[RMDB]
RNA sequence: GGGAACGACUCGAGUAGAGUCGAAAAGAGAGUGACUGACAGAGUGUGAGUCUCACUGUCACUGUCUCUCUGUCUGUGUCUCAGACAGUCUCUCAGACUCACUCUGUGAGUCAGACUCAGUGACAGACCAAGUCUUGAACUUCGGUUCAAGACUUGGAAAAGAAACAACAACAACAAC
Reactivity to DMS in 0.01 (KOAc 150mM, MgCl2 10mM, bicine 150mM(pH8.5), 24C), signal-to-noise 2, nucleotides 027 to 126: g000a040g000a080g010u010g010a020c010u010g000a040c060a100g010a100g020u000g020u000g010a080g020u000c010u000c160a160c040u000g010u010c020a010c020u000g000u010c020u000c010u010c010u000g000u000c010u010g000u000g000u010c250u000c010a020g010a010c010a010g010u000c060u000c070u000c140a110g000a030c010u000c010a020c020u000c100u010g010u000g000a010g010u000c000a050g000a090c100u000c000a040g000u000g010a030c030a040g000a300
Reactivity to 2A3 in 0.01 (KOAc 150mM, MgCl2 10mM, bicine 150mM(pH8.5), 24C), signal-to-noise 3, nucleotides 027 to 126: g060a000g000a000g040u090g010a010c020u050g030a000c020a030g140a060g180u190g040u040g090a020g020u050c010u030c070a120c040u010g010u000c010a000c000u010g060u000c010u000c000u000c000u020g040u030c010u050g120u020g170u120c050u060c200a000g010a030c010a010g040u000c010u000c000u000c040a000g010a020c000u020c040a030c020u150c060u140g030u030g070a010g020u040c010a000g020a010c020u010c040a030g010u010g010a020c000a010g010a040
Record summary
The data come from the RNA Mapping Database (RMDB), library OK2TRN. Structure probing data (DMS and 2A3) for a 177-nucleotide construct. For DMS the reverse transcriptase was MarathonRT. For 2A3, 3,409 sequencing reads were counted. The reactions ran in a buffer of 150 mM KOAc, 10 mM MgCl2 and 150 mM bicine (pH 8.5), at 24 C.